[RMDB]
RNA sequence: GGGAACGACUCGAGUAGAGUCGAAAACCUUUGAUCCGGAGUUUGCUGUAUGGCUACUCAAACAGCUGAAUUCGGCGCAUGUUGUACAUGAGUUUGUCGCAUACCAUGUGCGGUCGGGCAAGGGCGGGGUCUGUCUACGUUUCGACGUGGACGGGCUAAAAGAAACAACAACAACAAC
Reactivity to 2A3 in 0.01 (KOAc 150mM, MgCl2 10mM, bicine 150mM(pH8.5), 24C), signal-to-noise 9, nucleotides 027 to 126: c000c000u010u030u070g130a110u030c010c020g040g000a040g010u070u140u060g040c010u020g040u160a120u140g080g030c070u100a060c040u050c050a050a090a010c020a010g000c000u060g040a060a050u070u040c020g030g000c010g000c020a030u060g020u060u100g050u120a030c020a050u050g020a050g140u060u110u120g160u100c030g000c040a010u030a130c040c020a050u090g010u020g020c020g020g020u040c010g000g010g000c030a040a030g030g000g020c050g010g060
Reactivity to DMS in 0.01 (KOAc 150mM, MgCl2 10mM, bicine 150mM(pH8.5), 24C), signal-to-noise 9, nucleotides 027 to 126: c010c000u010u020u020g000a060u020c010c010g010g010a040g010u000u000u000g010c010u000g000u000a070u020g000g000c140u030a080c100u030c030a060a100a040c040a030g010c010u010g020a040a060u010u010c020g000g010c100g010c060a040u010g010u010u020g010u010a150c060a060u000g000a110g000u000u010u020g020u010c050g000c040a050u010a110c120c120a050u010g010u000g000c020g000g010u010c040g000g000g000c070a050a060g010g000g010c070g000g000